Background
Structure probing data (DMS and 2A3) for a 177-nucleotide construct.

RNA sequence: GGGAACGACUCGAGUAGAGUCGAAAAUGCGAUAAACGGCACCUAUAAGGUGGUGCCGAACCAGCGUGACCUACCAACACGCAACGAGCAGUCUGGUAUGACUGCAAACCUAUGGUAAACUAAAGAACUUCCAAGCAGAAUUCGUUCUGCUUGGAAGAAAAGAAACAACAACAACAAC
Reactivity to DMS in 0.01 (KOAc 150mM, MgCl2 10mM, bicine 150mM(pH8.5), 24C), signal-to-noise 1, nucleotides 027 to 126: u020g030c110g040a120u030a020a110a090c040g000g000c010a000c000c000u000a170u030a120a170g000g010u000g000g050u000g000c000c030g000a030a060c140c060a060g000c000g000u010g010a010c030c000u000a020c040c000a180a050c030a000c000g020c000a050a110c140g000a240g010c000a000g010u000c000u040g030g010u010a150u020g000a070c000u000g000c030a020a080a050c000c040u000a040u000g000g000u010a020a130a180c190u000a050a080a080g010a040a250
Reactivity to 2A3 in 0.01 (KOAc 150mM, MgCl2 10mM, bicine 150mM(pH8.5), 24C), signal-to-noise 1, nucleotides 027 to 126: u040g020c040g010a040u080a120a080a030c010g030g030c000a000c010c010u070a110u090a300a090g220g080u090g000g000u000g000c010c000g010a010a010c010c010a000g020c000g040u010g030a070c020c000u000a010c020c000a060a020c000a000c000g020c000a000a010c080g050a040g000c020a000g010u000c000u100g090g110u270a130u240g010a010c000u000g050c010a000a050a000c050c000u070a080u050g010g040u090a030a110a010c050u110a210a000a140g040a100a100
The RNA was probed in 150 mM KOAc, 10 mM MgCl2 and 150 mM bicine (pH 8.5) at 24 C. Values cover nucleotides 27 to 126. For DMS, 772 sequencing reads were counted. It was measured as part of the RMDB library M2PK90. For DMS the reverse transcriptase was MarathonRT.